[RMDB]
RNA sequence: GGGAACGACUCGAGUAGAGUCGAAAAACGUACACGGGCCUCGUGAAGGACGUGGACCAUGAUGUGCUCGAAAGGAGUCUUCGAUGAAGGUAGAGGUGUGCGACCGACCCGAGGAGGUGUCCGAACGGAGCGAGACAAGGUUCGCCUUGUCUCGCUCAAAAGAAACAACAACAACAAC
Reactivity to 2A3 in 0.01 (KOAc 150mM, MgCl2 10mM, bicine 150mM(pH8.5), 24C), signal-to-noise 1, nucleotides 027 to 126: a000c010g030u040a020c000a000c000g000g300g000c000c000u020c000g030u030g060a040a000g030g000a000c000g010u020g000g050a000c010c000a020u180g020a050u030g140u180g040c000u040c020g200a300a080a050g300g020a050g000u000c000u020u000c030g180a160u090g090a090a080g140g000u160a050g080a040g150g000u300g070u040g150c020g010a020c000c010g010a000c030c020c010g010a010g010g000a040g020g000u020g030u000c000c040g030a060a020c060g040
Reactivity to DMS in 0.01 (KOAc 150mM, MgCl2 10mM, bicine 150mM(pH8.5), 24C), signal-to-noise 1, nucleotides 027 to 126: a160c030g030u000a020c000a000c010g000g010g000c000c020u000c010g080u000g000a160a220g000g030a020c030g030u000g000g000a030c050c000a090u000g000a140u030g000u000g010c000u000c020g000a060a080a130g000g000a080g000u010c010u000u000c000g000a120u000g010a080a140g000g070u010a090g000a080g030g010u000g000u000g020c040g000a060c050c000g000a270c000c070c010g000a070g000g000a110g000g000u000g000u000c010c020g000a130a140c220g000
Structure probing data (2A3 and DMS) for a 177-nucleotide construct. Source: RMDB library OK2TST, as collected in RNAgym. For 2A3 the reverse transcriptase was SuperScript II with manganese. High 2A3 reactivity points to a flexible backbone, as in loops and unpaired stretches. The reactions ran in a buffer of 150 mM KOAc, 10 mM MgCl2 and 150 mM bicine (pH 8.5), at 24 C.